[RMDB]
RNA sequence: GGGAACGACUCGAGUAGAGUCGAAAACUGAUGGCCGUUAUGGCCUGCAACUUUGAUUUGGAAUCACUUGAUAUAGCACUGUUCUCAGGUGACGACUCCUUAUUGGUAGGGGACAAGAACCUGUUGAGCUCUGUCGUUAAUUCGUUAACGACAGAGCAAAAGAAACAACAACAACAAC
Reactivity to 2A3 in 0.01 (KOAc 150mM, MgCl2 10mM, bicine 150mM(pH8.5), 24C), signal-to-noise 2, nucleotides 027 to 126: c030u070g000a100u080g040g020c000c000g050u150u230a250u300g030g000c000c000u000g070c000a080a090c020u150u080u060g020a080u080u000u180g120g070a100a060u000c000a020c050u020u070g070a030u110a010u030a200g090c100a020c090u060g130u220u010c010u000c020a020g000g010u010g030a040c020g040a020c000u000c000c000u070u080a140u190u200g100g040u030a020g000g040g020g000a020c030a040a050g070a050a020c000c000u060g060u030u060g020a000
Reactivity to DMS in 0.01 (KOAc 150mM, MgCl2 10mM, bicine 150mM(pH8.5), 24C), signal-to-noise 2, nucleotides 027 to 126: c000u000g000a100u020g010g030c000c000g020u020u010a090u010g030g010c000c000u000g030c120a090a060c140u000u010u000g030a060u000u020u000g020g020a240a140u000c070a040c160u000u010g010a150u020a110u010a070g010c090a110c120u020g010u010u000c020u000c000a010g020g000u010g000a150c180g010a130c030u000c000c000u010u000a100u010u010g030g050u010a050g000g000g010g000a040c020a070a190g030a250a040c040c000u000g030u010u010g010a130